[RMDB]
RNA sequence: GGGAACGACUCGAGUAGAGUCGAAAAACGAUUUGAAGUUGCAGAACCUGAAAUGGCAGAUAGGCGCAGAUGAGUGAAUUCCAAUAAAUACAGACAGACUAUGCGAUUGGUGUGCGCGAAUAUCGCCCCAUGUGAGAACCUUCGGGUUCUCACAUGGAAAAGAAACAACAACAACAAC
Reactivity to DMS in 0.01 (KOAc 150mM, MgCl2 10mM, bicine 150mM(pH8.5), 24C), signal-to-noise 3, nucleotides 027 to 126: a050c050g000a120u050u010u000g000a050a200g020u010u020g030c040a050g010a070a120c050c030u000g010a040a120a100u000g010g030c010a080g050a020u020a000g010g010c010g020c010a020g000a210u000g000a090g000u000g010a020a170u040u000c010c010a080a030u020a030a090a080u030a120c070a150g010a150c080a090g000a100c110u040a050u030g010c080g000a070u000u000g010g060u000g000u030g000c030g020c000g020a060a100u020a020u000c000g030c070c010
Reactivity to 2A3 in 0.01 (KOAc 150mM, MgCl2 10mM, bicine 150mM(pH8.5), 24C), signal-to-noise 2, nucleotides 027 to 126: a000c040g060a070u010u010u110g160a120a040g020u080u100g040c030a020g060a080a060c010c000u040g010a140a000a060u060g030g000c050a080g050a020u040a040g180g000c020g020c030a010g040a220u110g000a100g030u200g130a040a060u180u070c010c000a010a000u010a060a140a020u130a090c040a000g090a010c000a000g020a010c130u110a070u160g030c040g060a080u030u020g040g020u000g000u010g070c000g010c000g000a040a000u060a000u030c000g040c040c000